[RMDB]
The data come from the RNA Mapping Database (RMDB), library M2RFPK. Chemical mapping of a 207-nucleotide RNA with 2A3 and DMS. High DMS reactivity at an A or C suggests that its Watson-Crick edge is free. For 2A3 the reverse transcriptase was SuperScript II with manganese.

RNA sequence: GGGAACGACUCGAGUAGAGUCGAAAAGCAAAUAUUGUCUUAAUUACUUAGGCUAAAAGAAGUAAGUAUUAAAGCGGGACAAGGCAUCGACAUUUGAUACAAAUAUUGAUCAAUGGAUGUCUUAUUUAAACCUCAUCCGGCUUCGGCCGGAUGAGAACUAUAUGUAUCAGUUCGCUGAUACAUAUAGAAAAGAAACAACAACAACAAC
Reactivity to 2A3 in 0.01 (KOAc 150mM, MgCl2 10mM, bicine 150mM(pH8.5), 24C), signal-to-noise 5, nucleotides 027 to 156: g020c020a030a060a060u180a110u170u120g020u010c010u040u160a150a160u150u050a090c040u050u080a050g060g020c040u160a130a080a010a110g020a040a000g030u030a080a020g000u010a050u080u070a130a030a020g050c060g000g050g010a020c060a070a000g000g000c000a000u000c010g140a130c030a030u050u050u150g010a010u130a080c050a040a170a040u230a140u210u200g020a000u020c000a000a000u020g010g010a010u000g000u000c000u000u010a020u010u090u050a040a060a020c010c000u000c000a000u000c000c000g010g010c000u030u080c170g110g000c000c000g000g000a000u000g000a000g000a000a000
Reactivity to DMS in 0.01 (KOAc 150mM, MgCl2 10mM, bicine 150mM(pH8.5), 24C), signal-to-noise 2, nucleotides 027 to 156: g050c040a090a090a120u000a090u000u020g010u000c000u000u000a050a140u000u000a020c090u000u000a060g040g020c070u000a050a110a150a140g000a060a070g000u020a040a090g010u000a060u000u000a010a050a100g010c020g000g020g000a040c060a010a020g010g000c010a030u000c020g010a100c080a040u000u000u000g030a080u000a200c050a050a080a140u000a090u000u000g010a110u000c030a030a060u000g000g010a000u000g000u000c010u000u020a030u000u000u000a050a080a090c080c000u000c000a020u010c010c000g000g030c000u000u000c300g050g070c020c000g020g000a000u000g000a010g000a010a070